[RMDB]
RNA sequence: GGGAACGACUCGAGUAGAGUCGAAAAAUUCUGCAGCCCAGAGAGUAGUCUCAGGGCAUCCUCUGGAGCCUGACCUGUGAUCGUCGCAUCAUAGACCGCCAGUAGACCUGGGAGCAGAUUCACCGCCUCAUUUUUUAGGAUUCGUCCUAAAAAAUGAAAAAGAAACAACAACAACAAC
Reactivity to DMS in 0.01 (KOAc 150mM, MgCl2 10mM, bicine 150mM(pH8.5), 24C), signal-to-noise 8, nucleotides 027 to 126: a050u000u010c010u000g010c020a180g010c000c000c010a080g010a060g010a070g010u030a100g000u000c010u000c040a110g000g000g020c020a060u010c030c020u010c100u010g010g010a180g010c100c020u000g010a060c090c020u010g010u010g010a010u010c020g010u040c200g010c120a030u000c020a020u000a040g020a080c070c110g010c040c020a040g000u010a080g010a090c060c010u000g000g000g010a170g010c020a010g000a030u000u000c040a110c020c020g000c150c110
Reactivity to 2A3 in 0.01 (KOAc 150mM, MgCl2 10mM, bicine 150mM(pH8.5), 24C), signal-to-noise 9, nucleotides 027 to 126: a000u050u010c010u010g010c010a060g080c000c000c020a010g010a000g000a010g040u260a050g030u020c010u010c070a040g010g010g010c010a050u020c000c020u110c120u130g020g020a040g040c010c020u020g030a060c010c010u020g030u020g030a040u020c070g140u100c080g240c110a020u010c000a000u030a030g050a080c040c060g050c050c010a030g040u090a020g060a050c000c010u010g000g000g010a020g000c010a000g000a000u030u030c150a190c080c010g030c010c020